[RMDB]
Background: Structure probing data (2A3) for a 207-nucleotide construct. The 2A3 profile rests on 766 reads. For 2A3 the reverse transcriptase was SuperScript II with manganese. It was measured as part of the RMDB library OK3TST.
RNA sequence: GGGAACGACUCGAGUAGAGUCGAAAAAAAAAAUACAAAGUUUCAGCACGACCUCGGUCCAUUCAAAAAGCAUUCGAAUAUAACAACAAGAAAUUUAUCAAAAUCCUCAAACAGUUUAUAGAUAAACGCAACGUGUUUCGCAAAUGUGAAAACGAUACUGUUAUAGGCAAUUCGUUGCCUAUAACAGAAAAGAAACAACAACAACAAC
Reactivity to 2A3 in 0.01 (KOAc 150mM, MgCl2 10mM, bicine 150mM(pH8.5), 24C), signal-to-noise 1, nucleotides 027 to 156: a000a010a010a000a000a000u090a060c040a020a110a020g000u010u010u050c030a010g040c040a000c030g010a050c050c010u070c030g030g000u000c020c000a060u080u050c070a000a000a000a110a000g050c010a000u040u140c090g090a080a030u130a000u090a220a040c090a000a010c010a030a030g130a060a080a060u010u110u130a000u010c030a000a120a140a070u100c000c020u110c040a110a210a180c010a090g000u040u090u140a080u040a070g090a030u130a000a130a000c040g000c050a050a040c050g030u040g020u030u060u000c000g010c020a000a060a120u190g050u160g070a000a210a000a000c050g040a080u220a060